[RMDB]
The data come from the RNA Mapping Database (RMDB), library M2PK50. Chemical mapping of a 177-nucleotide RNA with DMS and 2A3. The RNA was probed in 150 mM KOAc, 10 mM MgCl2 and 150 mM bicine (pH 8.5) at 24 C. For DMS the reverse transcriptase was MarathonRT.

RNA sequence: GGGAACGACUCGAGUAGAGUCGAAAAGGAGUUAAGUUCGCUUAACUCCCACUACCGAGAAUGCGAGUCGGUAUAUCGCAAUAACCCUUGGAAACAAGGGAACCACUGACGACUUCGGUCGUCAGAAGAUCCAAUUGAGGUUCGCCUCAAUUGGAUCAAAAGAAACAACAACAACAAC
Reactivity to DMS in 0.01 (KOAc 150mM, MgCl2 10mM, bicine 150mM(pH8.5), 24C), signal-to-noise 1, nucleotides 027 to 126: g000g010a040g050u000u010a000a000g000u000u000c180g050c000u010u010a010a020c000u010c000c000c020a090c140u020a130c060c010g000a170g020a060a130u060g030c000g000a000g000u000c090g020g010u010a060u000a070u000c010g010c010a060a090u030a060a110c010c000c010u020u000g000g000a190a050a150c000a010a000g020g000g000a070a030c160c210a120c010u000g000a010c010g000a040c000u000u010c220g030g010u000c010g000u000c000a000g000a010a080
Reactivity to 2A3 in 0.01 (KOAc 150mM, MgCl2 10mM, bicine 150mM(pH8.5), 24C), signal-to-noise 2, nucleotides 027 to 126: g000g010a010g000u010u000a000a010g000u010u110c130g020c100u000u000a000a000c000u000c000c000c000a050c000u080a060c000c010g030a030g080a130a060u130g020c030g000a000g080u090c040g040g000u080a120u030a010u060c030g000c060a020a040u110a150a170c020c000c000u000u000g030g010a020a060a040c000a020a000g000g000g030a010a010c030c020a020c030u000g010a000c000g010a000c000u030u050c210g120g000u000c000g000u000c000a000g000a000a020